[RMDB]
RNA sequence: GGGAACGACUCGAGUAGAGUCGAAAAGGUGGAAGCAUCAUGUUAGAUGGGAAGCGCCAGGAACUACCAGUAGUGUUGAGCACACCUAGCUACACAGCUAAGUAUGUCCCAGGCACCAAGCCUGUUGCGGUUUGAUCGUCUUCGGACGAUCAAACCGAAAAGAAACAACAACAACAAC
Reactivity to DMS in 0.01 (KOAc 150mM, MgCl2 10mM, bicine 150mM(pH8.5), 24C), signal-to-noise 1, nucleotides 027 to 126: g030g000u000g000g010a080a120g090c060a040u020c080a150u000g000u000u000a090g000a030u030g030g020g010a130a020g010c060g010c090c010a080g000g010a060a050c060u010a090c050c040a060g050u000a050g040u000g000u000u000g000a100g070c000a040c100a030c200c050u010a020g030c010u000a150c160a090c220a150g000c000u000a000a090g000u000a030u000g010u000c020c000c020a000g010g000c000a060c050c150a050a160g000c000c000u000g010u030u000g010